[RMDB]
RNA sequence: GGGAACGACUCGAGUAGAGUCGAAAAGAUAUGGAGGUAGAUGACUGCAACAGCUCGGAAACGAGACAUGCAGCAUCACCUCCUAAGUCAAAACUUAUGAAAUCUGGUUCGCCAGAUUUCAUAAGAAUCUUUGUACACUCUUCGGAGUGUACAAAGAAAAAGAAACAACAACAACAAC
Reactivity to DMS in 0.01 (KOAc 150mM, MgCl2 10mM, bicine 150mM(pH8.5), 24C), signal-to-noise 1, nucleotides 027 to 126: g000a010u000a300u000g000g000a030g010g010u000a060g020a000u010g000a070c010u000g060c000a020a170c200a190g010c000u020c000g010g000a120a110a140c000g010a020g000a060c080a150u000g010c000a000g000c020a010u000c000a040c000c020u000c000c000u000a010a070g010u010c000a120a030a170a140c010u010u010a000u000g010a000a010a000u000c000u000g000g000u010u010c250g020c000c000a010g000a000u000u000u020c000a000u000a010a000g000a080a100
Reactivity to 2A3 in 0.01 (KOAc 150mM, MgCl2 10mM, bicine 150mM(pH8.5), 24C), signal-to-noise 1, nucleotides 027 to 126: g010a000u080a020u150g000g020a000g000g080u140a260g110a040u030g120a300c010u010g000c000a050a090c040a280g010c000u000c000g040g050a020a110a040c000g000a010g000a030c040a060u050g000c000a030g000c000a000u000c000a000c010c000u020c000c000u010a010a000g020u000c000a030a060a110a140c000u010u000a030u050g000a000a000a020u000c000u010g040g040u050u170c260g060c130c000a010g010a030u010u000u010c000a000u000a010a010g020a000a000
Structure probing data (DMS and 2A3) for a 177-nucleotide construct. High DMS reactivity at an A or C suggests that its Watson-Crick edge is free. Reactivities are given for positions 27 through 126.